[RMDB]
RNA sequence: GGGAACGACUCGAGUAGAGUCGAAAAGAUAUGGAGUCUUCCCUCCGGUAAUACUAUGGUAUACCGAGUAUAUUCGGAAACGAAUAUAUAGUGUAUACCAUAGUGCCAGGAGGAAGACUCCUAAGUCGAAAGACAACUUGUUCGCAAGUUGUCUUUCAAAAGAAACAACAACAACAAC
Reactivity to DMS in 0.01 (KOAc 150mM, MgCl2 10mM, bicine 150mM(pH8.5), 24C), signal-to-noise 2, nucleotides 027 to 126: g020a080u000a300u020g000g020a040g010u000c010u000u000c070c000c030u000c010c010g000g000u000a140a140u010a300c000u010a010u000g010g010u000a010u000a000c000c040g010a260g030u010a010u000a000u000u010c000g010g000a160a170a200c020g000a020a000u000a000u000a000u000a100g010u020g000u000a020u010a000c010c000a000u010a000g010u000g020c000c000a050g040g000a150g030g010a010a000g010a010c000u000c000c000u000a010a040g010u000c120
Reactivity to 2A3 in 0.01 (KOAc 150mM, MgCl2 10mM, bicine 150mM(pH8.5), 24C), signal-to-noise 2, nucleotides 027 to 126: g090a000u110a090u250g010g010a020g010u000c010u020u030c120c000c040u030c010c010g000g000u110a250a080u150a300c000u000a010u000g020g010u000a000u010a000c010c010g020a100g080u010a020u010a010u020u010c010g010g050a090a170a070c020g020a010a000u000a000u000a000u020a050g140u160g000u300a000u000a010c000c000a000u000a000g000u000g010c020c010a140g000g000a000g000g000a020a000g000a000c000u000c010c000u000a010a000g030u030c080